Chemical mapping of a 177-nucleotide RNA with 2A3 and DMS.
For DMS, 1,419 sequencing reads were counted.
For 2A3, 1,218 sequencing reads were counted.
DMS adducts were read by reverse transcription with MarathonRT.

RNA sequence: GGGAACGACUCGAGUAGAGUCGAAAAAGAAGCCUGUUAUCAGCAGGGGCUGAGCUGGUUCAUGUCUUCUGUUGCCCCAUACACAUGUGGCUCUCUAGUGGAGGAGGUGUUAGCCACAGUGAUUUGCGGUAUCGCCACCAUUCGUGGUGGCGAUACCAAAAGAAACAACAACAACAAC
Reactivity to 2A3 in 0.01 (KOAc 150mM, MgCl2 10mM, bicine 150mM(pH8.5), 24C), signal-to-noise 1, nucleotides 027 to 126: a030g040a000a000g020c020c000u050g000u180u020a060u110c030a000g000c000a000g090g050g050g000c070u050g000a010g000c000u030g090g010u060u040c030a040u050g020u020c000u020u000c000u050g110u100u280g070c030c000c000c000a020u120a030c000a000c070a130u070g000u030g010g000c000u020c000u000c020u160a110g140u090g060g120a210g040g000a020g050g080u080g010u040u140a000g010c000c000a000c000a000g000u030g030a260u050u030u100g040c100
Reactivity to DMS in 0.01 (KOAc 150mM, MgCl2 10mM, bicine 150mM(pH8.5), 24C), signal-to-noise 1, nucleotides 027 to 126: a000g020a040a060g010c050c070u000g020u010u000a040u010c030a050g010c010a070g020g020g010g020c170u000g000a150g010c010u010g000g010u000u000c010a010u000g010u010c020u000u000c070u000g010u000u010g010c050c000c020c040a080u000a180c030a000c030a070u000g000u000g020g010c020u000c010u000c030u010a170g030u010g000g010a120g010g010a020g020g020u010g000u050u010a000g020c000c000a020c000a040g000u000g010a190u010u000u010g030c250